Structure probing data (2A3 and DMS) for a 177-nucleotide construct. The reactions ran in a buffer of 150 mM KOAc, 10 mM MgCl2 and 150 mM bicine (pH 8.5), at 24 C. DMS adducts were read by reverse transcription with MarathonRT. High 2A3 reactivity points to a flexible backbone, as in loops and unpaired stretches. It was measured as part of the RMDB library OK2TST.

RNA sequence: GGGAACGACUCGAGUAGAGUCGAAAAUUAUUUUGGCUGGCCUUUUUCCGAACCAUCAUCCCGAUGUCUUUUUUUUGCCGGGGUGUGUGUAGGAACGCUGGCGAGCAGAGGAGGAAGGGAGGAGCUGGUGAUUCUUAUAAUUCGUUAUAAGAAUCACAAAAGAAACAACAACAACAAC
Reactivity to 2A3 in 0.01 (KOAc 150mM, MgCl2 10mM, bicine 150mM(pH8.5), 24C), signal-to-noise 6, nucleotides 027 to 126: u060u020a060u030u190u080u080g030g000c010u030g130g020c020c000u070u080u020u040u050c010c010g010a080a020c010c010a020u220c010a010u010c020c010c000g060a100u040g090u150c150u150u170u100u080u080u080u230u180g020c020c000g000g010g000g000u000g010u010g000u000g000u020a010g000g010a010a000c030g000c040u020g010g010c000g010a010g010c020a020g040a110g030g030a110g000g040a120a050g040g010g010a120g030g010a070g040c060u070g090
Reactivity to DMS in 0.01 (KOAc 150mM, MgCl2 10mM, bicine 150mM(pH8.5), 24C), signal-to-noise 7, nucleotides 027 to 126: u010u010a060u010u000u000u010g010g010c010u000g000g020c010c020u000u000u000u000u000c010c000g000a130a140c300c010a010u000c010a010u000c000c000c000g010a160u010g010u010c000u000u000u000u000u010u010u010u000g010c030c000g010g000g020g030u000g010u000g000u000g000u000a210g000g000a020a020c300g000c110u000g010g010c000g000a010g010c020a050g010a140g010g000a140g000g010a120a070g000g000g000a080g010g000a120g020c120u000g010